About this RNA
An RNA of 177 nucleotides, treated with 2A3 and DMS and read out base by base. DMS adducts were read by reverse transcription with MarathonRT. Values cover nucleotides 27 to 126.
[RMDB]
RNA sequence: GGGAACGACUCGAGUAGAGUCGAAAAGAUAUGGACCCAAUACCUCCAACAGCUCCCGGGUCGGAAACGACCCGGAGACAUGGAGAUUGGGUCCUAAGUCAAAUCAGAGAUCUUCGGAUCUCUGAAACAUACCUACCAUGUUCGCAUGGUAGGUAUGAAAAGAAACAACAACAACAAC
Reactivity to 2A3 in 0.01 (KOAc 150mM, MgCl2 10mM, bicine 150mM(pH8.5), 24C), signal-to-noise 5, nucleotides 027 to 126: g010a000u020a010u070g000g010a000c000c010c000a010a010u220a300c080c030u010c040c030a300a180c080a280g020c020u090c070c110c040g020g000g010u010c020g010g000a020a010a010c000g010a020c060c020c010g000g000a000g010a000c020a130u300g000g000a010g010a000u010u000g020g000g000u000c000c000u000a000a000g000u000c000a030a010a180u040c000a000g010a000g020a020u000c000u090u170c300g110g000a010u020c010u000c000u010g010a000a000a000
Reactivity to DMS in 0.01 (KOAc 150mM, MgCl2 10mM, bicine 150mM(pH8.5), 24C), signal-to-noise 4, nucleotides 027 to 126: g000a010u000a060u010g000g000a020c000c000c010a010a000u000a150c300c010u000c000c010a170a100c180a160g000c040u000c060c080c150g040g010g010u000c010g010g010a010a010a030c010g020a010c000c000c020g000g000a010g000a020c050a170u010g030g010a010g000a060u000u000g010g000g010u000c000c000u000a000a060g000u000c000a110a150a190u010c010a000g000a020g000a010u000c000u000u010c210g030g000a000u000c000u000c000u000g000a020a060a150